The record gives the reactivity of an RNA of 207 nucleotides to 2A3.
The 2A3 profile rests on 767 reads.
The RNA was probed in 150 mM KOAc, 10 mM MgCl2 and 150 mM bicine (pH 8.5) at 24 C.
RNA sequence: GGGAACGACUCGAGUAGAGUCGAAAACGAUCUGUUUUCAGAUCGAGCUACGUUUUCGUAGCGAUGGGUAGCGCUCCUCCCAGCUACCCUAUAUUUGAUAUAAAUGGACAUCCGCCGGUACCAGGGUGUCCGGGAGGAGAUAUAAUGGGUGCCGGAAGGUAGCGUAUAGGUUCGCCUAUACGCUACCAAAAGAAACAACAACAACAAC
Reactivity to 2A3 in 0.01 (KOAc 150mM, MgCl2 10mM, bicine 150mM(pH8.5), 24C), signal-to-noise 2, nucleotides 027 to 156: c000g000a000u000c000u000g140u120u080u300u300c010a000g010a000u000c080g000a040g000c000u000a010c010g090u120u020u070u300c020g000u000a010g020c010g000a050u090g040g000g000u000a000g000c010g000c080u010c010c000u000c000c000c000a000g000c000u000a000c000c000c030u010a020u020a030u090u090u050g030a030u010a030u050a260a140a110u210g000g000a000c000a000u000c010c010g070c040c020g020g000u000a020c000c000a050g000g040g000u000g000u010c000c000g000g000g000a010g060g050a000g010a000u230a000u040a000a140u090g090g000g000u010g000c000c020g000g010a100a020